[RMDB]
RNA sequence: GGGAACGACUCGAGUAGAGUCGAAAAAGGGCUGGGAUAAGCAUUUUCAGGCCAAUACCAUUGGGCAUCGAACGGUACUCUCAACGAUUCGCUUGGGAUUGGAGGUACUCAGGCGGCCUGAUUAUCAAAUCACGGAGAAAGAAUUGCUGGCGGCCUGCAGUCUAGGCAAGUUCGCUUGCCUAGACUGAAAAGAAACAACAACAACAAC
Reactivity to 2A3 in 0.01 (KOAc 150mM, MgCl2 10mM, bicine 150mM(pH8.5), 24C), signal-to-noise 2, nucleotides 027 to 156: a020g070g000g030c030u050g010g030g030a120u070a110a020g000c050a030u070u020u080u150c000a010g060g020c050c040a050a040u200a190c050c050a040u060u150g060g030g000c080a100u170c140g020a040a000c020g060g040u060a060c080u110c030u010c270a110a060c040g040a080u130u020c010g060c300u120u060g150g000g010a040u020u060g000g000a010g010g000u000a010c010u010c030a030g010g010c000g060g000c000c000u000g000a000u000u070a070u120c040a000a070a090u140c040a010c080g120g010a060g010a100a120a050g060a060a140u160u050g000c010u070g050g010c000g040g000c000c000u030g010
Background
The record gives the reactivity of an RNA of 207 nucleotides to 2A3. For 2A3 the reverse transcriptase was SuperScript II with manganese. The data come from the RNA Mapping Database (RMDB), library OK3TST. For 2A3, 673 sequencing reads were counted.